[RMDB]
RNA sequence: GGGAACGACUCGAGUAGAGUCGAAAAUGACAUAUUCAAAUUUGCGUUUUGAAAACAUUGCAAUAUGGAGAAGAGAUGUAAGGCCAUUAGUGGCUAUUGGUUGAUUAAACUGAUCUUACUGCAGUACUCUAGGUAACAAGUAAUGGUAGCUUGGGCAGGUAGGCUAAAUGUUCGCAUUUAGCCUACCAAAAGAAACAACAACAACAAC
Reactivity to DMS in 0.01 (KOAc 150mM, MgCl2 10mM, bicine 150mM(pH8.5), 24C), signal-to-noise 1, nucleotides 027 to 156: u010g010a080c030a020u010a070u000u000c050a080a080a180u000u000u000g030c060g000u000u010u000u020g000a090a110a150a080c050a100u000u000g020c070a040a010u000a070u000g050g010a140g030a080a120g000a120g040a110u000g000u000a030a160g020g020c030c030a070u000u000a110g050u010g030g020c020u000a050u000u000g010g030u000u000g010a120u010u000a050a030a060c020u010g030a070u010c040u000u000a070c050u000g000c010a050g010u000a030c020u000c030u000a040g010g020u000a040a040c060a010a050g080u000a030a070u010g010g010u000a010g000c110u000u000g030g010g050c070a010
Reactivity to 2A3 in 0.01 (KOAc 150mM, MgCl2 10mM, bicine 150mM(pH8.5), 24C), signal-to-noise 3, nucleotides 027 to 156: u060g020a020c020a060u150a060u070u050c060a070a090a120u060u020u140g030c050g040u050u050u050u180g110a100a040a020a020c050a050u080u070g010c030a040a030u020a050u160g030g020a040g020a090a000g020a010g010a010u050g030u100a060a110g030g020c040c020a010u060u080a050g100u080g050g010c010u040a080u030u090g040g030u070u040g030a150u030u150a050a050a000c000u000g000a030u020c030u080u110a070c040u060g020c020a040g030u010a020c000u000c000u020a020g060g000u030a110a040c050a090a000g010u040a050a010u020g000g030u000a010g040c040u020u020g010g020g000c020a020